RNA sequence: GGGAACGACUCGAGUAGAGUCGAAAAGAUUUUAGUGUUUGAACCUUAUGGUGCUGAUUCUGCUGUUACAUGGUUCAUGUUUGAGUGGAAUGGGUCAUAGACCAUGUGGUGAUUCUCGAUCAGCUCAGGACGAAGUUGCGUUCGCGUAACUUCGUCCAAAAGAAACAACAACAACAAC
Reactivity to 2A3 in 0.01 (KOAc 150mM, MgCl2 10mM, bicine 150mM(pH8.5), 24C), signal-to-noise 2, nucleotides 027 to 126: g040a060u070u160u070u300a140g000u140g130u120u110u080g030a010a010c000c000u050u110a090u070g000g000u040g010c020u070g030a000u070u000c020u020g060c050u020g070u260u040a020c000a000u040g060g230u050u180c060a000u000g050u000u050u040g050a010g000u010g000g070a040a040u030g130g000g000u050c050a200u100a040g030a020c000c000a000u000g000u000g000g000u000g010a060u030u000c000u000c020g050a110u020c050a000g070c020u030c030a030
Reactivity to DMS in 0.01 (KOAc 150mM, MgCl2 10mM, bicine 150mM(pH8.5), 24C), signal-to-noise 2, nucleotides 027 to 126: g000a070u000u000u040u050a050g000u000g010u030u000u000g020a210a040c010c000u000u000a020u000g000g000u000g000c010u000g040a000u000u000c010u000g000c020u000g000u020u020a000c020a010u000g030g040u030u030c050a020u000g000u000u000u000g010a050g050u000g000g000a000a010u000g010g020g000u000c200a190u030a060g010a040c010c010a000u000g000u010g000g010u010g000a170u000u000c000u000c020g010a060u010c070a000g020c030u000c090a240
Source: RMDB library OK1LIB, as collected in RNAgym. Chemical mapping of a 177-nucleotide RNA with 2A3 and DMS. For 2A3 the reverse transcriptase was SuperScript II with manganese. For 2A3, 2,011 sequencing reads were counted. The RNA was probed in 150 mM KOAc, 10 mM MgCl2 and 150 mM bicine (pH 8.5) at 24 C.